[RMDB]
About this RNA:
This 177-nucleotide RNA was probed chemically with 2A3 and DMS. For 2A3, 3,296 sequencing reads were counted. Source: RMDB library M2PK90, as collected in RNAgym. The DMS profile rests on 2,263 reads. The RNA was probed in 150 mM KOAc, 10 mM MgCl2 and 150 mM bicine (pH 8.5) at 24 C.
RNA sequence: GGGAACGACUCGAGUAGAGUCGAAAAUAAAAACAUUACAGUACCGUAAUCAAGUACAAAAAGGUAGAAAUACCAAAAAGCCCAAAGUUACAAGGGCAAAGUAACACCAGGAAAGGAAACCAAAAAAUCGAUAAGUUAAGUUCGCUUAACUUAUCGAAAAAGAAACAACAACAACAAC
Reactivity to 2A3 in 0.01 (KOAc 150mM, MgCl2 10mM, bicine 150mM(pH8.5), 24C), signal-to-noise 2, nucleotides 027 to 126: u100a020a080a010a000a010c040a030u100u150a060c030a040g040u030a030c020c040g000u020a020a030u130c040a080a020g010u020a020c070a020a160a020a020a020g000g000u010a010g010a040a040a030u030a000c000c000a010a110a020a000a030g010c020c000c000a080a020a020g090u130u070a060c040a140a210g030g020g000c010a070a040a000g020u030a050a010c010a010c030c030a010g000g100a070a010a010g030g000a070a030a040c060c030a080a090a010a010a040a050
Reactivity to DMS in 0.01 (KOAc 150mM, MgCl2 10mM, bicine 150mM(pH8.5), 24C), signal-to-noise 3, nucleotides 027 to 126: u010a060a060a070a120a080c070a090u000u010a050c090a130g000u000a020c060c020g010u000a130a080u000c150a100a100g000u000a000c030a050a080a080a110a080g010g000u010a010g000a100a080a170u010a010c000c000a040a080a040a120a150g000c000c000c000a020a090a140g000u030u000a040c120a070a080g020g000g010c030a030a010a080g000u000a000a030c020a140c070c040a050g000g000a040a040a070g000g000a040a060a020c040c130a000a030a100a110a090a070